[RMDB]
RNA sequence: GGGAACGACUCGAGUAGAGUCGAAAAAAGUGAAGGAAGCGCUGAUUUCCACUUUCCUGCAGGGGACCACACAAGCCAUCUCAGCACAGGGGUUGGAAACUGCGAGUUUUGCUGACCUUGGUGGGCAAUCCCCAAGUUAUUUCGAUAACUUGGGGAUAAAAGAAACAACAACAACAAC
Reactivity to 2A3 in 0.01 (KOAc 150mM, MgCl2 10mM, bicine 150mM(pH8.5), 24C), signal-to-noise 2, nucleotides 027 to 126: a000a000g070u090g010a110a030g010g000a070a030g040c090g060c150u090g090a300u030u010u030c000c000a030c050u060u100u050c000c010u010g050c110a060g000g010g000g040a020c030c000a020c020a020c010a110a000g030c020c000a040u010c020u020c010a030g030c040a010c020a060g070g040g020g020u060u070g080g000a060a060a000c020u070g040c100g060a080g030u060u050u020u150g030c000u000g020a010c000c000u020u040g060g010u060g020g050g030c010a010
Reactivity to DMS in 0.01 (KOAc 150mM, MgCl2 10mM, bicine 150mM(pH8.5), 24C), signal-to-noise 3, nucleotides 027 to 126: a070a020g020u010g000a170a070g000g000a070a060g010c070g030c100u000g000a100u010u000u000c020c010a060c060u000u000u000c010c020u000g010c100a090g010g020g000g000a080c090c040a060c090a070c080a060a110g000c060c060a050u000c030u010c040a060g020c060a070c110a080g000g000g000g020u000u000g010g010a050a040a080c060u000g010c090g010a110g020u000u000u010u000g020c010u010g000a080c110c030u000u000g010g020u000g000g000g010c100a120
This 177-nucleotide RNA was probed chemically with 2A3 and DMS. Reactivities are given for positions 27 through 126. Conditions: 150 mM KOAc, 10 mM MgCl2 and 150 mM bicine (pH 8.5), 24 C. For 2A3 the reverse transcriptase was SuperScript II with manganese.